The data come from the RNA Mapping Database (RMDB), libraries RFM100 and RFMREP. Chemical mapping of a 177-nucleotide RNA with DMS and 2A3. The RNA was probed in 150 mM KOAc, 10 mM MgCl2 and 150 mM bicine (pH 8.5) at 24 C. The 2A3 profile rests on 528 reads.
RNA sequence: GGGAACGACUCGAGUAGAGUCGAAAAAUGAUGAUCUGAUCUCCCAUAUCCUUGCUGGUUUGGAUUUUGAUUAUAAUCCUGUUGUGUCCUCGAUUACGGGAUGCACCGAGUCUGUUUCCUUUGGUGAUAGCUAGAUUGAGUUCGCUCAAUCUAGCUAAAAAGAAACAACAACAACAAC
Reactivity to DMS in 0.01 (KOAc 150mM, MgCl2 10mM, bicine 150mM(pH8.5), 24C), signal-to-noise 2, nucleotides 027 to 126: a050u040g000a050u020g010a070u010c060u000g010a060u000c060u010c110c010c040a130u010a110u000c000c040u000u010g070c070u030g000g010u030u000u010g010g000a050u000u000u010u000g000a100u000u020a080u020a050a080u000c020c010u010g010u020u000g010u000g000u000c010c030u000c140g000a140u010u010a090c200g020g000g010a040u000g000c120a040c030c010g000a030g000u000c010u020g000u010u010u000c010c010u020u040u000g020g010u010g030a160
Reactivity to 2A3 in 0.01 (KOAc 150mM, MgCl2 10mM, bicine 150mM(pH8.5), 24C), signal-to-noise 2, nucleotides 027 to 126: a000u160g000a040u050g000a010u000c010u060g010a040u000c040u140c000c000c000a040u080a050u160c030c040u120u170g080c070u060g030g040u050u040u060g010g010a020u040u070u060u000g080a160u050u090a120u060a210a080u140c010c000u100g050u300u010g020u120g020u060c000c040u200c120g090a160u110u270a010c040g000g000g000a010u090g000c000a010c010c000g010a000g000u010c040u270g060u000u000u110c000c000u100u040u020g060g000u070g010a010
Notes
DMS adducts were read by reverse transcription with MarathonRT.